[RMDB]
This 177-nucleotide RNA was probed chemically with 2A3 and DMS. The 2A3 profile rests on 22,116 reads. The data come from the RNA Mapping Database (RMDB), library OK2TRN. The DMS profile rests on 13,030 reads.

RNA sequence: GGGAACGACUCGAGUAGAGUCGAAAACCUAAUUCCUAAAGAACAACGCCACUUAGACAUCGAGGAGUUAGCGGCUAAACUCGACAUUAAGGAAAUCUUGUACAAGUUUCCGUACGAGAUGUCGGGGGUACGACAUAGUAUUCGUACUAUGUCGUACAAAAGAAACAACAACAACAAC
Reactivity to 2A3 in 0.01 (KOAc 150mM, MgCl2 10mM, bicine 150mM(pH8.5), 24C), signal-to-noise 9, nucleotides 027 to 126: c000c000u020a040a070u060u040c010c010u100a140a120a060g080a100a040c050a040a030c090g050c020c020a070c050u110u130a050g040a110c030a110u070c090g060a040g020g020a020g040u020u040a020g020c030g070g010c070u100a090a080a070c010u010c010g010a000c010a020u060u070a080a040g040g010a030a030a020u080c010u040u070g080u120a070c060a170a100g010u010u050u000c050c010g010u060a060c080g070a060g000a220u010g000u000c000g000g000g000g040
Reactivity to DMS in 0.01 (KOAc 150mM, MgCl2 10mM, bicine 150mM(pH8.5), 24C), signal-to-noise 8, nucleotides 027 to 126: c040c010u010a070a110u010u000c020c000u000a060a080a300g010a070a070c100a050a110c110g000c030c050a060c080u000u010a110g020a070c090a080u000c050g010a070g010g010a050g010u000u000a030g010c050g000g000c070u010a050a070a100c010u000c010g020a020c030a030u000u000a090a110g010g000a020a030a030u020c010u000u000g010u010a040c150a040a030g010u010u000u000c020c010g010u000a070c210g010a120g010a020u000g010u000c000g000g000g000g000